RNA sequence: GGGAACGACUCGAGUAGAGUCGAAAAGACUACCUGGAGAUCGAGGUGGGGGGGCGACGGCUGUUCUUCGUCAAGGCUCACGUGCGAGAGAGCCUCCUCAGCAUCCUCCUGCGGGACUGGCUCGCCACUUACACGUUCGUUUCGACGAACGUGUAAGAAAAGAAACAACAACAACAAC
Reactivity to DMS in 0.01 (KOAc 150mM, MgCl2 10mM, bicine 150mM(pH8.5), 24C), signal-to-noise 2, nucleotides 027 to 126: g000a110c020u020a040c080c010u000g010g000a070g010a080u010c030g010a060g000g050u000g020g040g000g000g000g000g020c080g040a080c040g000g020c140u000g000u000u040c040u000u000c060g020u020c180a100a130g000g010c000u020c050a070c080g040u000g030c060g000a050g000a070g040a160g010c010c000u000c000c010u020c010a060g000c100a080u010c030c010u010c000c030u000g000c070g000g000g000a110c080u020g000g010c020u010c050g020c050c090a300
Reactivity to 2A3 in 0.01 (KOAc 150mM, MgCl2 10mM, bicine 150mM(pH8.5), 24C), signal-to-noise 5, nucleotides 027 to 126: g040a020c050u060a060c010c020u030g040g030a070g020a130u100c060g010a040g020g040u050g000g000g010g000g020g000g000c020g020a070c020g060g020c020u060g110u180u070c030u090u030c030g100u050c100a100a070g040g000c000u020c030a060c080g090u100g070c090g020a050g010a020g000a000g090c000c000u000c000c000u030c020a020g030c010a090u090c000c030u040c010c020u040g030c040g000g010g030a080c070u050g020g010c010u010c010g040c000c010a020
Source: RMDB library OK1LIB, as collected in RNAgym. Structure probing data (DMS and 2A3) for a 177-nucleotide construct. For 2A3, 4,754 sequencing reads were counted. The reactions ran in a buffer of 150 mM KOAc, 10 mM MgCl2 and 150 mM bicine (pH 8.5), at 24 C. DMS (dimethyl sulfate) methylates the pairing face of unpaired adenines and cytosines. Reactivities are rounded to 0.1 and cut off at 0 and 3.